The record gives the reactivity of an RNA of 177 nucleotides to 2A3 and DMS.
The RNA was probed in 150 mM KOAc, 10 mM MgCl2 and 150 mM bicine (pH 8.5) at 24 C.
[RMDB]
RNA sequence: GGGAACGACUCGAGUAGAGUCGAAAAGUGCCAGCCGGCGCGGGUCGCCGUACUCGUAGAGCCAAUGAGUGUUGGGUAGCACCGGGAUCGGCUCGCCGGCAUCGUUGGCCGGUGCCUGCCAUGCGGCCAUUUAUGGAAGUUUCGACUUCCAUAAAUGAAAAGAAACAACAACAACAAC
Reactivity to 2A3 in 0.01 (KOAc 150mM, MgCl2 10mM, bicine 150mM(pH8.5), 24C), signal-to-noise 9, nucleotides 027 to 126: g080u060g080c010c000a010g010c020c010g010g020c030g000c020g010g010g010u040c040g020c060c020g020u030a020c010u000c010g030u050a040g010a010g060c020c020a060a090u190g080a110g190u150g080u130u210g110g020g030u050a010g010c010a010c000c000g040g020g050a150u190c060g000g000c010u010c020g000c010c000g010g000c010a060u160c100g100u100u200g080g000c010c010g020g000u010g010c020c020u030g000c020c010a080u100g020c020g000g000c000
Reactivity to DMS in 0.01 (KOAc 150mM, MgCl2 10mM, bicine 150mM(pH8.5), 24C), signal-to-noise 9, nucleotides 027 to 126: g020u010g010c010c020a130g020c020c020g010g020c050g010c030g010g000g010u000c050g010c030c030g020u000a100c020u000c020g020u000a090g010a070g020c010c020a140a090u010g000a120g020u000g010u010u010g010g010g020u000a050g010c020a030c020c010g010g000g010a110u010c100g000g000c010u000c040g010c000c010g000g010c010a060u000c130g010u010u000g010g010c010c010g000g010u000g000c120c060u000g010c020c030a120u010g020c020g000g000c010